[RMDB]
RNA sequence: GGGAACGACUCGAGUAGAGUCGAAAACAUGGUCUGAACUACGACAUCCGUGAUGGAAUUAAAAAAGUGCCCUACUAUAGCAAAUGCACUACCGGCAGGCAUCUGACUUUCCGCGUGACUUUGUUAAGAAAUCAACUCGUUUCGACGAGUUGAUUUCAAAAGAAACAACAACAACAAC
Reactivity to 2A3 in 0.01 (KOAc 150mM, MgCl2 10mM, bicine 150mM(pH8.5), 24C), signal-to-noise 1, nucleotides 027 to 126: c010a060u060g010g000u050c020u020g030a070a080c030u130a060c130g020a010c000a040u000c000c000g090u100g020a080u210g080g050a000a130u130u180a090a030a040a000a080a000g070u030g060c030c000c000u060a050c020u060a050u130a100g000c000a020a100a110u090g030c010a010c030u030a000c010c010g000g000c050a010g020g020c010a030u060c100u110g130a160c000u010u060u020c030c000g010c000g000u010g020a040c020u080u050u010g060u160u050a050a000
Reactivity to DMS in 0.01 (KOAc 150mM, MgCl2 10mM, bicine 150mM(pH8.5), 24C), signal-to-noise 1, nucleotides 027 to 126: c110a100u000g010g050u020c040u010g000a090a060c100u000a060c100g010a160c050a120u020c040c020g060u020g000a120u010g010g000a090a080u030u000a000a090a040a080a090a050g010u010g000c010c070c080u010a040c090u010a150u010a080g010c070a040a060a050u000g030c000a020c110u000a050c140c050g010g000c090a050g010g000c020a070u010c110u000g000a060c110u010u000u000c010c050g010c050g000u010g000a100c020u020u000u000g030u000u000a090a130